This 177-nucleotide RNA was probed chemically with 2A3 and DMS. Reactivities are given for positions 27 through 126. DMS adducts were read by reverse transcription with MarathonRT.
RNA sequence: GGGAACGACUCGAGUAGAGUCGAAAAACGCAUGUACGAAGUCAUUCCCGGUCGAGGGAAUCCCCCUCCGAUGUACCAGACCUAUAUAUCGAUGACGCUAAUCAAAAUUGAUGGGGAAUGGAAAAUCCAAUACGGAUGUUUUCGAACAUCCGUAUUGAAAAGAAACAACAACAACAAC
Reactivity to 2A3 in 0.01 (KOAc 150mM, MgCl2 10mM, bicine 150mM(pH8.5), 24C), signal-to-noise 4, nucleotides 027 to 126: a000c070g030c070a090u150g040u190a050c060g050a110a030g060u040c020a030u010u000c000c020c000g000g080u130c070g040a090g000g000g030a060a120u070c010c010c000c000c000u000c000c020g030a030u040g030u070a060c000c000a020g010a030c000c010u040a030u020a030u010a010u300c030g030a020u060g020a020c060g000c150u120a080a050u120c040a040a050a040a120u010u040g020a030u040g030g000g020g000a040a030u040g020g000a100a070a000a070u030c040
Reactivity to DMS in 0.01 (KOAc 150mM, MgCl2 10mM, bicine 150mM(pH8.5), 24C), signal-to-noise 8, nucleotides 027 to 126: a070c080g020c090a050u010g020u010a070c070g010a100a070g010u000c090a070u000u000c000c010c010g020g020u000c150g010a100g000g010g010a080a090u010c040c020c000c000c000u000c010c050g020a040u000g010u000a140c020c020a050g010a280c030c010u000a080u010a090u010a030u000c030g010a080u010g010a120c220g010c160u010a070a100u010c070a040a080a100a060u010u000g010a050u000g010g000g000g000a050a130u000g000g000a050a040a120a070u000c040